[RMDB]
RNA sequence: GGGAACGACUCGAGUAGAGUCGAAAAGAGUAGAAAGGAACUUCAUGGUGUAGUUCCAUACAUUUCUGAGCUAUAAGAAAAAGGUAUAGUGAUGAUGUGUUAAGUGCCAUGCUUCAGAUCUGAAGGUUGUGUAAUAAUUUUCAUGACUGCGCUUGUACAGAUCCUCUGAAUUCGUUCAGAGGAUCUGAAAAGAAACAACAACAACAAC
Reactivity to 2A3 in 0.01 (KOAc 150mM, MgCl2 10mM, bicine 150mM(pH8.5), 24C), signal-to-noise 5, nucleotides 027 to 156: g020a000g030u110a010g100a070a090a030g020g000a010a030c020u070u030c050a110u100g080g000u120g030u050a030g000u010u000c010c010a010u060a020c030a000u040u090u000c020u020g010a010g000c020u030a010u040a090a110g130a080a140a070a020a000g090g020u040a020u020a030g040u040g030a060u020g010a010u020g030u020g010u070u060a070a030g040u020g040c020c010a030u030g040c010u070u050c030a060g020a300u060c030u060g020a030a020g040g000u040u020g020u030g030u050a020a070u070a080a100u100u070u100u120c050a040u100g030a030c010u020g010c050g000c050u050u060g020u020a020
Reactivity to DMS in 0.01 (KOAc 150mM, MgCl2 10mM, bicine 150mM(pH8.5), 24C), signal-to-noise 2, nucleotides 027 to 156: g020a110g030u000a090g000a080a100a150g010g010a050a060c020u010u000c080a110u010g040g030u000g000u000a070g000u000u010c030c010a160u000a040c040a120u010u000u000c030u010g020a300g000c070u000a060u000a080a130g000a040a050a110a120a180g020g020u000a030u000a060g010u000g000a210u000g000a020u000g050u020g020u000u000a060a120g010u010g020c040c030a080u010g050c110u000u010c030a120g000a090u020c040u000g010a050a050g010g020u000u010g030u000g030u010a050a070u000a080a050u010u010u010u010c000a050u000g000a070c020u000g020c060g000c050u020u000g000u000a220